Chemical mapping of a 177-nucleotide RNA with DMS and 2A3.
For DMS, 3,985 sequencing reads were counted.
RNA sequence: GGGAACGACUCGAGUAGAGUCGAAAACACAUAUAUCCAUUUUACUUCAAAAGGCUUUAGGAAAGGAAGAGAAGGAACUAUAGCUGAAAGCAGUGUUCGGAUGGUGUGGUAGACAGAACAAUGGUACAACGAUAGCCAAAUUCGUUUGGCUAUCGUUAAAAGAAACAACAACAACAAC
Reactivity to DMS in 0.01 (KOAc 150mM, MgCl2 10mM, bicine 150mM(pH8.5), 24C), signal-to-noise 4, nucleotides 027 to 126: c080a070c110a080u000a090u010a080u000c020c010a080u010u010u000u010a090c040u000u010c080a030a090a130a160g000g010c060u000u000u010a040g010g010a060a090a090g010g010a080a060g000a080g010a070a040g020g010a100a100c060u000a040u010a060g000c030u000g020a060a110a090g010c070a060g020u000g010u010u000c070g000g010a040u000g000g010u000g010u000g000g000u000a070g010a060c090a080g000a050a060c090a030a050u000g020g020u000a070c190
Reactivity to 2A3 in 0.01 (KOAc 150mM, MgCl2 10mM, bicine 150mM(pH8.5), 24C), signal-to-noise 4, nucleotides 027 to 126: c040a000c030a010u120a000u030a030u240c030c010a050u070u110u070u130a050c010u030u090c030a070a080a060a040g010g020c020u090u090u080a010g050g030a120a060a010g060g070a060a020g030a020g030a120a050g060g020a010a000c020u040a030u080a110g030c050u040g060a080a040a020g020c040a010g020u010g050u110u130c060g030g020a030u020g010g000u040g020u010g040g030u030a020g040a080c020a040g060a120a000c040a100a060u130g060g020u080a050c040
The RNA was probed in 150 mM KOAc, 10 mM MgCl2 and 150 mM bicine (pH 8.5) at 24 C. Values cover nucleotides 27 to 126.